RNA sequence: GGGAACGACUCGAGUAGAGUCGAAAAGGAGUGCUACCGAAAGGUAGCACUCCAACAAAUCGGUGUAAUUGCAGCCCGUAUUACACCGUGCGGCACAGCGGAAACGCUGAUGUCGUAUAUAGGGCUACGCCCCUAUAGGAUUCGUCCUAUAGGGGCGAAAAGAAACAACAACAACAAC
Reactivity to 2A3 in 0.01 (KOAc 150mM, MgCl2 10mM, bicine 150mM(pH8.5), 24C), signal-to-noise 1, nucleotides 027 to 126: g000g000a000g010u000g000c000u010a010c000c000g050a060a060a050g000g000u000a000g000c000a000c010u000c000c000a000a000c000a000a000a000u050c010g020g000u000g000u010a020a010u020u100g050c040a010g000c000c000c000g010u030a010u000u010a000c000a000c040c010g010u030g010c010g020g000c010a000c000a020g020c020g010g040a080a050a030c010g000c000u000g000a050u010g000u000c000g000u000a000u000a000u020a010g010g020g000c000u030a040
Reactivity to DMS in 0.01 (KOAc 150mM, MgCl2 10mM, bicine 150mM(pH8.5), 24C), signal-to-noise 2, nucleotides 027 to 126: g000g000a010g040u010g010c000u000a010c000c000g010a150a090a150g020g010u000a020g000c000a000c000u010c000c000a040a030c090a060a040a060u030c020g020g010u000g000u000a010a010u000u000g030c140a050g020c000c000c010g010u000a030u000u000a010c000a000c000c000g010u000g010c010g000g020c000a030c020a000g010c010g020g000a090a070a200c000g030c000u000g010a050u000g030u000c000g020u000a010u010a070u010a070g020g000g010c010u000a190